[RMDB]
Structure probing data (2A3 and DMS) for a 177-nucleotide construct.
Reactivities are given for positions 27 through 126.
Conditions: 150 mM KOAc, 10 mM MgCl2 and 150 mM bicine (pH 8.5), 24 C.
It was measured as part of the RMDB library TTRDES.
DMS adducts were read by reverse transcription with MarathonRT.
For 2A3 the reverse transcriptase was SuperScript II with manganese.
RNA sequence: GGGAACGACUCGAGUAGAGUCGAAAAGAUAUGGAGCAAAUUCUUCAACAGCAGGUCUGUCGGAAACGACAGCCUGACAUGAAGGUUUGCUCCUAAGUCAAAAGCGUCAACGUUCGCGUUGACGCAACUUGAUGCUAUAGUUCGCUAUAGCAUCAAGAAAAGAAACAACAACAACAAC
Reactivity to 2A3 in 0.01 (KOAc 150mM, MgCl2 10mM, bicine 150mM(pH8.5), 24C), signal-to-noise 9, nucleotides 027 to 126: g010a000u020a010u070g010g000a000g000c010a020a020a050u300u260c050u030u020c090a300a160c060a300g020c000a000g010g070u260c050u030g000u000c000g010g000a020a010a010c000g000a000c000a000g000c000c000u000g000a010c010a210u300g000a000a010g000g010u000u000u000g000c000u000c000c000u000a000a000g000u000c020a010a040a130a110g000c000g000u000c000a000a000c000g020u080u130c300g030c000g130u000u000g000a000c000g000c000a000a000
Reactivity to DMS in 0.01 (KOAc 150mM, MgCl2 10mM, bicine 150mM(pH8.5), 24C), signal-to-noise 6, nucleotides 027 to 126: g010a020u000a130u010g000g000a020g010c010a000a000a010u000u020c010u000u000c000a120a080c280a170g000c010a020g000g000u030c030u000g000u000c010g010g000a020a020a050c000g010a010c000a000g010c000c000u000g010a000c070a250u020g010a000a010g000g010u000u000u000g000c000u000c000c000u000a000a060g000u010c010a110a110a120a140g010c000g010u000c000a010a000c000g020u000u020c250g020c010g030u000u000g000a010c000g010c010a010a020